[RMDB]
RNA sequence: GGGAACGACUCGAGUAGAGUCGAAAAUUAAAUAAAAACAAAAAGUCGUUACAAUGCAGGUAGUGACGUGUGCAUCUACUGCAAUGAAGCGACUUAAAGCACACGAAGAACGAAAGUACAAAAAAAAACUAAUAAGAUAGUUCGCUAUCUUAUUAGUAAAAGAAACAACAACAACAAC
Reactivity to 2A3 in 0.01 (KOAc 150mM, MgCl2 10mM, bicine 150mM(pH8.5), 24C), signal-to-noise 1, nucleotides 027 to 126: u060u030a070a000a000u150a020a060a070a000a040c000a020a220a020a010a000g000u020c010g040u030u080a070c060a000a070u000g020c000a000g040g170u090a000g000u050g040a030c070g070u090g060u160g080c000a060u000c020u040a000c000u000g000c000a040a030u080g050a060a010g030c000g000a000c000u000u000a000a030a000g020c010a000c020a000c110g050a040a080g050a090a020c040g040a210a010a090g030u130a040c140a000a060a000a040a010a000a120a180
Reactivity to DMS in 0.01 (KOAc 150mM, MgCl2 10mM, bicine 150mM(pH8.5), 24C), signal-to-noise 1, nucleotides 027 to 126: u000u000a040a040a160u040a020a040a120a140a040c080a050a110a150a080a000g000u000c000g040u000u000a150c030a060a090u000g000c020a010g010g010u010a020g030u000g000a000c040g020u000g000u000g040c010a020u000c000u030a030c000u000g020c030a000a040u010g010a060a090g040c040g000a020c000u000u000a030a110a130g010c060a060c080a050c080g030a120a080g010a060a050c080g020a030a090a160g000u010a030c050a050a010a000a000a060a050a120a160
This 177-nucleotide RNA was probed chemically with 2A3 and DMS. It was measured as part of the RMDB library M2PK90. Reactivities are given for positions 27 through 126.